[RMDB]
Structure probing data (2A3 and DMS) for a 177-nucleotide construct.
The RNA was probed in 150 mM KOAc, 10 mM MgCl2 and 150 mM bicine (pH 8.5) at 24 C.
Values are in units of 0.01, from 0 to 300, in steps of 10.
RNA sequence: GGGAACGACUCGAGUAGAGUCGAAAAGAGGCCGUACCCGCGGCGAUUACCGUCUCCUGCGCGAUUCUUGGCUUAGUGCUGGUAGUGACGCGCGACGGCUGGCUCAGUCUGUUUAUGGCGGCAGUCGAUUAGGGUGCUAGUUCGCUAGCACCCUAAUAAAAGAAACAACAACAACAAC
Reactivity to 2A3 in 0.01 (KOAc 150mM, MgCl2 10mM, bicine 150mM(pH8.5), 24C), signal-to-noise 4, nucleotides 027 to 126: g090a030g050g000c030c010g020u080a080c070c010c000g000c000g020g000c010g000a030u080u100a090c010c010g000u020c040u100c040c050u070g000c020g010c000g040a080u080u050c020u150u170g070g000c040u120u100a100g050u180g230c020u060g080g040u070a090g020u020g110a050c020g000c000g010c000g010a020c040g020g000c000u060g060g010c010u000c100a030g040u030c010u120g170u140u060u070a160u240g020g000c000g000g010c020a020g010u010c010g010
Reactivity to DMS in 0.01 (KOAc 150mM, MgCl2 10mM, bicine 150mM(pH8.5), 24C), signal-to-noise 3, nucleotides 027 to 126: g010a140g010g010c000c000g020u010a080c030c020c040g000c040g000g000c030g010a070u040u010a150c050c020g020u010c010u030c130c070u010g000c010g020c020g000a090u020u010c020u010u020g010g010c020u010u060a140g010u030g000c030u010g010g000u030a080g000u020g020a080c030g000c010g000c050g010a080c030g000g000c010u010g000g000c120u030c040a070g000u010c020u040g000u010u010u010a100u020g030g010c000g010g010c040a030g000u000c040g000